Overview:
The record gives the reactivity of an RNA of 177 nucleotides to 2A3 and DMS. The reactions ran in a buffer of 150 mM KOAc, 10 mM MgCl2 and 150 mM bicine (pH 8.5), at 24 C. Reactivities are given for positions 27 through 126.
RNA sequence: GGGAACGACUCGAGUAGAGUCGAAAAAACAAACACCGGAUCCGGAUGAAAUAGCAGGGGAUGCAGUCCUGAUAUUGGUAUUAAACGUUUUUGCCGUCUGGAGGACUUCGAAUAUCGUACCCGUCCAAUUAUUAGCUGCUUUCGAGCAGCUAAUAAUAAAAGAAACAACAACAACAAC
Reactivity to 2A3 in 0.01 (KOAc 150mM, MgCl2 10mM, bicine 150mM(pH8.5), 24C), signal-to-noise 2, nucleotides 027 to 126: a000a030c040a000a050a020c030a020c040c000g000g050a040u020c010c010g000g040a020u070g040a190a070a180u130a040g120c010a020g010g060g060g070a010u080g010c050a000g000u010c010c000u010g040a020u040a080u040u090g000g030u010a090u040u230a180a190a020c030g020u010u000u010u020u080g030c030c010g030u050c030u040g050g110a110g030g030a020c040u060u010c090g030a060a020u060a050u240c020g020u010a070c010c000c000g000u050c030c000a010
Reactivity to DMS in 0.01 (KOAc 150mM, MgCl2 10mM, bicine 150mM(pH8.5), 24C), signal-to-noise 3, nucleotides 027 to 126: a060a040c060a130a110a060c110a050c030c010g010g000a060u000c030c060g000g020a050u000g000a090a100a070u010a110g000c060a040g010g030g010g000a080u000g010c060a260g010u000c010c000u000g000a060u000a060u010u010g010g020u000a050u000u000a020a070a100c140g020u010u000u000u000u000g000c070c020g020u000c080u010g010g010a100g000g010a040c040u000u000c050g010a070a080u000a080u010c020g030u000a080c010c000c030g020u000c090c100a120